[RMDB]
Conditions: 150 mM KOAc, 10 mM MgCl2 and 150 mM bicine (pH 8.5), 24 C.
The record gives the reactivity of an RNA of 177 nucleotides to DMS and 2A3.
For DMS, 14,730 sequencing reads were counted.
For DMS the reverse transcriptase was MarathonRT.
It was measured as part of the RMDB library OK1LIB.
RNA sequence: GGGAACGACUCGAGUAGAGUCGAAAAGAAGGUCGAGUGCACGACCAGAGAGUGCGGUGAGAGACCGACAAAGAGUUCGAAUCGGAACGAACCACCGCAUACGAUCGACUGAAGAUCGAAGUGAGAAGGACUAUAAUGAGUUCGCUCAUUAUAGUCCAAAAGAAACAACAACAACAAC
Reactivity to DMS in 0.01 (KOAc 150mM, MgCl2 10mM, bicine 150mM(pH8.5), 24C), signal-to-noise 7, nucleotides 027 to 126: g030a170a110g020g010u000c010g000a160g030u020g000c150a120c000g000a010c010c010a160g000a160g010a160g010u000g000c000g000g000u000g000a070g010a300g030a150c010c000g000a070c170a050a100a150g010a170g020u040u030c060g000a130a170u020c040g010g010a130a080c040g000a090a150c130c000a030c000c010g040c010a010u000a080c050g000a070u000c000g010a090c150u030g000a110a110g000a070u000c010g000a120a090g000u020g010a140g000a150a110
Reactivity to 2A3 in 0.01 (KOAc 150mM, MgCl2 10mM, bicine 150mM(pH8.5), 24C), signal-to-noise 9, nucleotides 027 to 126: g120a090a070g020g000u020c030g020a070g100u230g090c100a050c100g010a000c000c000a000g020a000g000a000g020u010g000c000g000g010u010g020a090g000a000g020a050c000c020g000a000c020a010a170a010g170a020g070u180u220c080g040a070a070u050c020g050g020a080a080c010g010a030a020c020c000a000c000c010g010c020a010u030a080c020g000a010u010c000g080a120c110u190g060a050a020g000a030u010c010g010a090a040g110u140g070a090g050a170a060